Structure probing data (DMS and 2A3) for a 177-nucleotide construct. DMS adducts were read by reverse transcription with MarathonRT. The 2A3 profile rests on 4,398 reads. It was measured as part of the RMDB library M2PK90. 2A3 adducts were read by reverse transcription with SuperScript II with manganese.
[RMDB]
RNA sequence: GGGAACGACUCGAGUAGAGUCGAAAAUAAAAGAGCGUACGACUCACAAAGACUGUACGACAGUCUGACUCUCUCGUACGCUUGUUCAACGAGAGAGUGAGUGCGUUGGAACAAGUGUGAAAAAAAACGAACUAAUGAGUUUCGACUCAUUAGUUCGAAAAGAAACAACAACAACAAC
Reactivity to DMS in 0.01 (KOAc 150mM, MgCl2 10mM, bicine 150mM(pH8.5), 24C), signal-to-noise 5, nucleotides 027 to 126: u000a080a050a110a100g010a060g010c030g020u000a040c030g010a080c060u010c040a090c120a120a120a030g000a010c010u000g010u000a120c230g000a160c020a010g000u000c000u000g010a110c040u000c010u010c000u000c010g010u000a060c080g000c050u000u000g000u010u000c060a090a040c030g000a020g000a010g000a030g010u000g010a080g000u000g000c050g010u000u000g010g010a040a040c060a040a030g000u000g010u000g010a010a000a000a080a050a050a100a200
Reactivity to 2A3 in 0.01 (KOAc 150mM, MgCl2 10mM, bicine 150mM(pH8.5), 24C), signal-to-noise 3, nucleotides 027 to 126: u200a000a110a030a020g090a010g040c040g020u050a020c030g090a080c060u040c080a040c020a020a090a000g010a000c000u010g020u130a110c160g120a090c190a010g010u000c010u010g010a010c000u000c000u000c010u010c020g000u050a030c050g010c020u000u050g010u020u020c010a030a010c000g000a000g000a010g000a010g030u070g020a040g030u070g020c030g020u050u090g000g000a050a020c020a060a060g050u070g030u150g130a130a020a020a000a000a000a010a020